[RMDB]
RNA sequence: GGGAACGACUCGAGUAGAGUCGAAAAGAAAGAAAGAAGAAGAAGAAAAAGAGGUCAAACGUCAGAAUAUCGGGCGUAAAUACGACAUUAUGCAGAAAGGCGACCUCAAUGUCGUAAAGAAAGAAAAGCUAGGAGUAGGAUUCGUCCUACUCCUAGCAAAAGAAACAACAACAACAAC
Reactivity to DMS in 0.01 (KOAc 150mM, MgCl2 10mM, bicine 150mM(pH8.5), 24C), signal-to-noise 2, nucleotides 027 to 126: g000a040a030a050g040a050a060a050g000a090a000g020a060a030g000a050a020g020a040a030a010a010a040g000a000g010g010u000c120a040a040a050c010g020u000c030a020g020a180a120u040a040u030c110g020g000g000c000g000u000a070a070a090u010a020c000g000a010c000a020u040u000a030u040g000c150a070g010a070a060a110g010g000c080g010a060c060c020u030c120a040a010u000g000u000c000g000u000a030a060a100g000a040a070a050g000a130a090a100a160
Reactivity to 2A3 in 0.01 (KOAc 150mM, MgCl2 10mM, bicine 150mM(pH8.5), 24C), signal-to-noise 5, nucleotides 027 to 126: g030a000a050a000g060a010a050a020g010a020a000g020a030a000g040a010a000g040a020a050a010a000a000g030a000g020g000u030c020a100a070a040c010g010u000c010a060g080a300a070u200a140u300c090g020g000g030c000g010u020a060a070a070u080a000c000g000a000c010a010u020u040a070u190g060c060a020g220a120a110a020g190g040c060g040a040c010c020u000c010a010a000u000g000u000c010g000u020a040a080a030g100a020a050a010g070a050a050a030a010